Structure probing data (DMS) for a 177-nucleotide construct.
RNA sequence: GGGAACGACUCGAGUAGAGUCGAAAAUAAGUCUAGUUCGCUAGACUUACUAUCGGGAAAACAGCCUCCCGGCUCGAUCAGGCGGAUUCCGUCCAUGCGCUGCAACACACGUAUUCGUACGUGUGAAGGAUAGCGCCUAGUUCGCUAGGCGCUAUCCAAAAGAAACAACAACAACAAC
Reactivity to DMS in 0.01 (KOAc 150mM, MgCl2 10mM, bicine 150mM(pH8.5), 24C), signal-to-noise 1, nucleotides 027 to 126: u010a000a020g000u000c000u000a030g000u000u020c220g030c000u000a000g010a030c000u000u000a000c050u000a120u010c020g000g000g000a010a020a070a120c130a030g030c020c050u000c010c010c040g030g020c000u000c020g010a100u000c090a100g000g000c010g050g020a190u000u010c010c000g020u000c010c170a140u000g010c050g000c010u000g010c130a120a200c030a010c000a000c030g020u000a030u000u040c220g040u000a000c020g010u000g000u000g010a050a090